[RMDB]
RNA sequence: GGGAACGACUCGAGUAGAGUCGAAAAAGAUCCACGCUACGGCGUGGAUCACACGUUCAUCCCUAUUGGGACAGAAGUAGGCAUAGUGCCGAAGGAACGCAUUAGUCAUGCGCUACGGCGCAUGACACACAUCAGAGUCACUUCGGUGACUCUGAAAGCAAGACUGAUUGUUCGCAAUCAGUCUUGCAAAAGAAACAACAACAACAAC
Reactivity to 2A3 in 0.01 (KOAc 150mM, MgCl2 10mM, bicine 150mM(pH8.5), 24C), signal-to-noise 1, nucleotides 027 to 156: a000g000a000u020c000c000a000c030g020c010u050a040c300g130g000c000g000u000g010g050a000u010c000a020c010a000c000g010u000u000c000a020u070c000c000c000u060a300u210u300g000g040g000a010c000a010g200a170a010g030u020a030g020g000c070a080u140a160g210u100g230c030c030g010a030a000g030g010a010a010c040g010c220a130u120u160a030g000u080c010a000u010g000c000g060c000u010a040c300g010g000c000g000c000a000u000g030a000c000a000c000a000c000a060u000c000a000g000a000g000u020c000a000c000u060u100c210g070g010u060g000a000c000u020c000u000g010a000a000a040